[RMDB]
RNA sequence: GGGAACGACUCGAGUAGAGUCGAAAAGAACGCGAGGGUGACCUGCUGCAGUACUCGUCGGGAACGACUGGCCGACCGAAGGGAAUCAAACGCGAAUUGCCACACGUCUCACCGGAUGCGGCACCCGCCCCCGCGUACAGUUCGCUGUACGCGGGGGAAAAGAAACAACAACAACAAC
Reactivity to 2A3 in 0.01 (KOAc 150mM, MgCl2 10mM, bicine 150mM(pH8.5), 24C), signal-to-noise 2, nucleotides 027 to 126: g100a120a000c000g000c030g100a040g030g110g020u040g070a130c000c000u080g000c020u060g030c030a000g000u050a150c010u030c060g050u000c030g040g000g040a010a070c040g150a050c080u040g120g020c000c000g080a040c000c050g040a030a070g030g020g030a000a060u120c100a140a050a050c040g000c060g180a070a100u120u170g040c000c000a000c040a050c130g090u000c010u000c030a010c000c030g070g000a040u190g010c000g020g020c050a060c000c010c010g050

Conditions: 150 mM KOAc, 10 mM MgCl2 and 150 mM bicine (pH 8.5), 24 C. The record gives the reactivity of an RNA of 177 nucleotides to 2A3. 2A3 adducts were read by reverse transcription with SuperScript II with manganese.